[RMDB]
RNA sequence: GGGAACGACUCGAGUAGAGUCGAAAAGCGUUCUCUGGUUGGCUUGCUAGCUAAGAUUAAAUCAGAGAAUCCUACGUUCGGGAUAAUGAACGAUUCCCGCCUUGAGGGUCAGAAAGGCUAAACCUGUGAAUGAGCGGGGGGUCAAUACCCAAUUUGGCUUAUAAAGAUGGUUCGCCAUCUUUAUAAGAAAAGAAACAACAACAACAAC
Reactivity to DMS in 0.01 (KOAc 150mM, MgCl2 10mM, bicine 150mM(pH8.5), 24C), signal-to-noise 3, nucleotides 027 to 156: g020c140g040u010u000c000u000c000u000g020g070u010u000g010g030c040u000u000g020c060u000a160g040c090u000a040a060g020a120u000u010a070a060a070u000c010a040g010a040g000a000a070u000c050c010u010a120c000g010u000u000c020g000g020g020a250u010a080a110u000g010a040a030c010g010a300u000u000c000c000c020g010c130c080u020u020g000a120g020g010g020u010c070a090g000a080a050a050g010g010c050u000a050a080a120c030c030u010g010u000g000a140a110u000g010a080g020c080g000g010g020g050g000g010u000c030a060a110u000a130c020c000c010a060a300u000u000u000g010g010
Reactivity to 2A3 in 0.01 (KOAc 150mM, MgCl2 10mM, bicine 150mM(pH8.5), 24C), signal-to-noise 6, nucleotides 027 to 156: g070c040g030u020u000c000u000c000u000g040g010u030u040g030g010c030u030u070g050c100u170a170g010c030u060a070a020g030a120u210u220a090a030a000u030c000a000g000a000g020a010a020u030c000c010u020a050c010g000u000u010c020g020g030g020a100u070a200a070u190g020a020a000c000g000a000u030u030c000c000c000g020c020c000u020u100g040a050g000g020g030u050c040a010g050a050a040a000g030g000c000u030a050a030a020c010c020u050g020u030g120a170a140u090g010a040g060c060g000g010g000g000g010g000u010c000a000a040u080a200c010c010c010a010a020u110u060u110g070g000
Source: RMDB library ARCHII, as collected in RNAgym. Structure probing data (DMS and 2A3) for a 207-nucleotide construct. The reactions ran in a buffer of 150 mM KOAc, 10 mM MgCl2 and 150 mM bicine (pH 8.5), at 24 C. High 2A3 reactivity points to a flexible backbone, as in loops and unpaired stretches. The 2A3 profile rests on 4,652 reads. For 2A3 the reverse transcriptase was SuperScript II with manganese.